[RMDB]
RNA sequence: GGGAACGACUCGAGUAGAGUCGAAAAGAUAUGGAAGAUAGAGUUCGAGGAUCUACACGUGUCGGAAACGACAUGUAGGGAGAACCUAUCUUCCUAAGUCAAAGGUGAUAUCUUCGGAUAUCACCAAGAUACCUUGAAACUUCGGUUUCAAGGUAUCAAAAGAAACAACAACAACAAC
Reactivity to DMS in 0.01 (KOAc 150mM, MgCl2 10mM, bicine 150mM(pH8.5), 24C), signal-to-noise 4, nucleotides 027 to 126: g000a010u000a010u010g000g000a020a010g000a000u000a010g010a100g030u000u000c000g010a090g010g010a000u010c000u000a000c010a110c300g020u000g010u000c010g010g000a010a000a020c000g010a000c000a030u000g010u000a000g000g010g010a000g000a000a010c010c000u000a000u000c000u000u010c000c000u000a000a080g000u000c000a100a190a170g010g020u000g000a000u000a000u000c000u000u020c230g020g000a020u000a000u000c000a000c000c010a030a010
Reactivity to 2A3 in 0.01 (KOAc 150mM, MgCl2 10mM, bicine 150mM(pH8.5), 24C), signal-to-noise 4, nucleotides 027 to 126: g010a000u010a010u040g010g000a000a000g010a010u010a000g120a020g030u000u000c050g060a300g050g010a010u010c000u030a010c160a010c130g120u100g000u030c010g000g000a000a010a000c000g010a000c010a040u040g000u010a000g010g000g000a030g000a010a000c000c000u000a000u010c000u000u000c000c000u000a000a000g010u000c010a060a080a120g010g000u010g000a000u020a010u000c030u050u120c300g100g000a000u000a000u000c000a000c000c000a000a000
An RNA of 177 nucleotides, treated with DMS and 2A3 and read out base by base.
It was measured as part of the RMDB library TTRDES.
Reactivities are given for positions 27 through 126.
The DMS profile rests on 6,291 reads.
DMS adducts were read by reverse transcription with MarathonRT.
As a SHAPE reagent, 2A3 marks flexible, mostly unpaired nucleotides at the ribose 2'-OH.